[RMDB]
RNA sequence: GGGAACGACUCGAGUAGAGUCGAAAAUAGCUUCGCUAGAUUCCGCUUGACACCAAUCCUAGGUGCAUAGUGUCUACGUGCUGCCGCUUUGCGGCCAACGGCAUUUUGCUGUUGGAUGCUAAUUCGUCAGGACGUUAUAGUUCGCUAUAACGUCCUGAAAAGAAACAACAACAACAAC
Reactivity to 2A3 in 0.01 (KOAc 150mM, MgCl2 10mM, bicine 150mM(pH8.5), 24C), signal-to-noise 4, nucleotides 027 to 126: u120a020g040c020u070u070c050g000c020u010a040g020a100u070u020c030c010g000c020u000u030g030a050c000a000c000c010a040a060u120c020c020u080a060g000g080u050g020c020a020u040a050g050u030g020u040c030u030a020c050g040u060g040c040u060g020c030c000g060c100u100u100u270g000c000g060g000c010c010a010a000c000g000g020c030a030u070u110u090u300g000c000u000g010u020u000g000g000a000u040g000c000u010a100a130u110u060c030g020u010
Reactivity to DMS in 0.01 (KOAc 150mM, MgCl2 10mM, bicine 150mM(pH8.5), 24C), signal-to-noise 2, nucleotides 027 to 126: u010a050g020c000u000u000c070g030c010u020a060g000a090u000u010c090c050g000c000u000u010g010a080c060a010c000c010a030a120u010c090c080u000a060g010g000u020g010c040a050u020a020g020u010g000u000c020u000a080c110g020u010g000c080u040g010c010c030g050c110u020u000u030g030c010g000g000c000c020a000a030c000g000g000c000a160u030u030u030u020g030c010u040g000u000u000g000g010a070u000g010c060u040a070a110u030u020c050g000u010
Structure probing data (2A3 and DMS) for a 177-nucleotide construct.
The data come from the RNA Mapping Database (RMDB), libraries RFM100 and RFMREP.
Reactivities are given for positions 27 through 126.